[RMDB]
Annotation:
The data come from the RNA Mapping Database (RMDB), library M2PK50. Structure probing data (DMS and 2A3) for a 177-nucleotide construct. 2A3 adducts were read by reverse transcription with SuperScript II with manganese.
RNA sequence: GGGAACGACUCGAGUAGAGUCGAAAAUCUUAGCGUUUCGACGCUAAGAAAACGUGGUGGAGGAGGUGGAAAGCUCGGCAUUAAAGGGAUAAUAACAUCUUCAUAUAGGGUCGUUCGCGACCCUAAAGGCUGUAGAUUAUUUCGAUAAUCUACAGCCAAAAGAAACAACAACAACAAC
Reactivity to DMS in 0.01 (KOAc 150mM, MgCl2 10mM, bicine 150mM(pH8.5), 24C), signal-to-noise 3, nucleotides 027 to 126: u000c000u000u000a010g010c000g040u000u000u000c160g020a020c000g030c010u000a000a000g000a020a050a060a130c160g000u010g000g010u010g020g000a110g000g020a090g000g010u010g010g010a080a080a080g010c060u010c130g020g020c080a090u000u010a050a080a130g000g000g000a110u010a080a080u010a090a120c110a070u000c050u000u000c060a100u000a140u000a020g000g000g010u010c010g010u000u010c140g030c020g000a010c000c000c000u000a000a040a070
Reactivity to 2A3 in 0.01 (KOAc 150mM, MgCl2 10mM, bicine 150mM(pH8.5), 24C), signal-to-noise 2, nucleotides 027 to 126: u000c000u010u010a000g000c000g020u000u000u170c220g090a010c010g000c000u000a020a000g030a000a000a000a000c080g040u120g020g060u070g030g070a090g000g020a060g020g050u130g020g080a060a020a010g000c040u070c090g030g000c030a010u040u180a120a080a050g070g010g020a030u090a120a030u100a010a150c070a110u050c030u200u080c050a050u180a030u050a180g000g000g030u000c010g020u020u020c130g010c000g050a020c050c000c000u020a030a010a000
For DMS the reverse transcriptase was MarathonRT. The reactions ran in a buffer of 150 mM KOAc, 10 mM MgCl2 and 150 mM bicine (pH 8.5), at 24 C. The DMS profile rests on 2,561 reads. For 2A3, 1,576 sequencing reads were counted.